RNA sequence: GGGAACGACUCGAGUAGAGUCGAAAAUCGAAGCUAGCACAGGCUGGCGUCGAGCGUCUACUAGCGCUGCUAGCGGAGCAGAGGGUACCGCGCUACCUAGUGGAGAACAUGGCUAGGAACGGUGGCGAGCGCAAAGACACUUCGGUGUCUUUGCGCUAAAAGAAACAACAACAACAAC
Reactivity to DMS in 0.01 (KOAc 150mM, MgCl2 10mM, bicine 150mM(pH8.5), 24C), signal-to-noise 1, nucleotides 027 to 126: u000c070g000a020a040g020c010u000a000g000c000a290c280a150g000g050c040u000g000g040c050g070u020c030g000a040g000c040g020u000c030u010a110c000u040a030g000c030g000c210u000g020c010u000a110g040c050g000g000a240g060c150a110g000a100g020g000g000u010a040c030c020g000c100g030c050u000a100c020c010u000a040g030u000g010g010a140g020a130a180c160a170u010g000g000c030u010a020g000g000a300a070c050g000g040u020g000g020c040g000